Source: RMDB library TTRDEL, as collected in RNAgym. This 177-nucleotide RNA was probed chemically with DMS and 2A3. The DMS profile rests on 1,871 reads.

[RMDB]
RNA sequence: GGGAACGACUCGAGUAGAGUCGAAAAGAUAUGGAGAACUACCUCCUCGGAUAGGCGACUAUGUCGGAAACGACAUACCCGCUGCGGAGUGAGGCUCCUAAGUCAAACUCCAGCUUCGGCUGGAGAAGAUACCUUCAUGCUUCGGCAUGAAGGUAUCAAAAGAAACAACAACAACAAC
Reactivity to DMS in 0.01 (KOAc 150mM, MgCl2 10mM, bicine 150mM(pH8.5), 24C), signal-to-noise 3, nucleotides 027 to 126: g010a020u000a280u010g010g010a030g000a110a060c090u010a300c040c000u000c000c000u010c000g020g000a120u010a080g020g000c010g000a080c200u010a000u000g000u000c010g010g010a130a080a250c000g020a010c000a000u000a010c110c040c000g020c010u000g000c080g000g010a000g010u010g000a020g000g010c010u000c000c000u000a030a140g000u000c040a080a070a180c010u000c000c010a010g010c000u000u000c260g030g000c000u010g010g000a000g010a020a050
Reactivity to 2A3 in 0.01 (KOAc 150mM, MgCl2 10mM, bicine 150mM(pH8.5), 24C), signal-to-noise 2, nucleotides 027 to 126: g030a000u070a040u200g030g030a020g020a090a120c080u130a140c230c000u040c030c000u000c020g110g000a270u190a300g090g000c040g000a020c120u030a000u020g000u010c010g000g000a060a080a020c010g000a000c010a010u000a030c030c080c030g010c030u050g020c090g070g030a020g050u270g030a010g030g000c000u000c000c000u010a150a020g070u080c050a120a010a090c000u000c010c000a020g000c000u060u150c250g120g000c000u000g000g000a010g010a010a000

For 2A3, 2,496 sequencing reads were counted. DMS adducts were read by reverse transcription with MarathonRT. For 2A3 the reverse transcriptase was SuperScript II with manganese. Reactivities are given for positions 27 through 126.